The record gives the reactivity of an RNA of 177 nucleotides to DMS.
RNA sequence: GGGAACGACUCGAGUAGAGUCGAAAAAUGCUGGCUGGCCCCGUGUGCUGGUCUACCGCCAGGGCGUGUAUGGCUGGCGGGUACAUCCCACGGUGAAGGCGUAUCAAAGCUACGAGCGCGGGGAGCCUGGGGCAUUUAGUUUCGACUAAAUGCCCCAAAAAGAAACAACAACAACAAC
Reactivity to DMS in 0.01 (KOAc 150mM, MgCl2 10mM, bicine 150mM(pH8.5), 24C), signal-to-noise 1, nucleotides 027 to 126: a050u000g000c140u000g030g050c010u010g040g000c010c010c020c050g000u000g050u000g020c040u000g050g010u000c100u000a050c050c000g060c000c010a070g020g010g030c030g000u000g010u010a070u000g000g000c010u000g010g010c010g000g030g010u010a050c090a120u010c030c020c030a150c150g000g000u000g010a150a100g000g030c030g000u000a070u000c070a070a180a080g020c300u010a030c140g000a040g040c010g020c030g000g010g010g010a130g010c020c010
Conditions: 150 mM KOAc, 10 mM MgCl2 and 150 mM bicine (pH 8.5), 24 C.